[RMDB]
RNA sequence: GGGAACGACUCGAGUAGAGUCGAAAACCGCAGAAGGACGGAAAGACCCUAUAGACCUUAACUGUAAGCUGUCAUUGUUUCUUCGGUUUUAAUGCUCAGAGUAAGUGGGAGACGCUGAAGACGCCCUAAAGGACUCUAAGUUCGCUUAGAGUCCUUUAAAAGAAACAACAACAACAAC
Reactivity to DMS in 0.01 (KOAc 150mM, MgCl2 10mM, bicine 150mM(pH8.5), 24C), signal-to-noise 5, nucleotides 027 to 126: c000c000g020c130a100g000a060a090g000g010a100c070g000g000a100a060a090g020a090c050c040c030u000a110u010a070g010a080c030c010u010u010a070a100c030u000g010u020a040a100g020c030u020g010u010c020a160u010u020g000u010u010u000c010u000u000c060g010g010u000u000u010u040a070a060u020g000c010u010c040a050g010a080g000u010a050a060g020u030g000g000g000a150g000a100c110g010c020u000g020a070a090g000a080c090g000c000c020c030u030
Reactivity to 2A3 in 0.01 (KOAc 150mM, MgCl2 10mM, bicine 150mM(pH8.5), 24C), signal-to-noise 3, nucleotides 027 to 126: c000c000g000c010a050g030a160a040g060g030a000c040g010g060a100a100a000g100a120c000c000c000u060a070u040a090g110a040c010c010u100u030a050a100c030u050g050u110a040a060g070c000u010g030u080c020a030u040u040g040u070u060u010c060u010u030c000g010g010u010u080u070u100a090a020u110g020c010u010c010a020g030a000g110u060a140a040g070u130g120g000g000a060g040a010c040g040c000u010g000a050a030g050a000c050g010c010c000c000u020